[RMDB]
Structure probing data (DMS and 2A3) for a 177-nucleotide construct. Reactivities are given for positions 27 through 126. For DMS the reverse transcriptase was MarathonRT. The RNA was probed in 150 mM KOAc, 10 mM MgCl2 and 150 mM bicine (pH 8.5) at 24 C. For 2A3, 977 sequencing reads were counted.
RNA sequence: GGGAACGACUCGAGUAGAGUCGAAAAUUCGCCGAGGAAAUGAUGAUCUUGCUGCGCGUCUGCGUGUCCAGCAGCGCAACCGUCUCGGCGUCGGCGGAAUCGUGGGCGCGAUCGUGGCGGGGCGUGAAGUCGCUCCAUGAUUCGUCAUGGAGCGACUAAAAGAAACAACAACAACAAC
Reactivity to DMS in 0.01 (KOAc 150mM, MgCl2 10mM, bicine 150mM(pH8.5), 24C), signal-to-noise 1, nucleotides 027 to 126: u000u000c020g020c020c000g000a030g000g030a070a090a090u010g000a100u010g000a110u000c060u010u000g000c010u000g040c040g010c070g010u000c090u000g000c090g020u000g020u000c180c040a170g030c090a160g000c030g000c020a010a120c050c230g010u000c020u000c030g000g010c020g010u000c020g020g000c020g000g000a120a050u000c020g020u010g000g040g000c030g020c050g020a070u000c070g000u020g000g000c090g000g000g010g010c020g020u010g020a140
Reactivity to 2A3 in 0.01 (KOAc 150mM, MgCl2 10mM, bicine 150mM(pH8.5), 24C), signal-to-noise 1, nucleotides 027 to 126: u060u030c020g060c060c010g050a090g030g160a060a090a130u230g020a090u100g010a030u080c040u050u110g010c000u070g000c010g000c020g090u100c060u110g040c020g080u050g070u070c070c040a020g000c000a000g000c030g000c020a030a040c050c000g020u050c000u010c020g030g000c030g010u030c020g020g020c020g060g080a150a070u150c010g020u040g020g000g010c000g000c030g030a070u170c030g000u040g010g040c000g020g010g000g020c010g040u130g040a010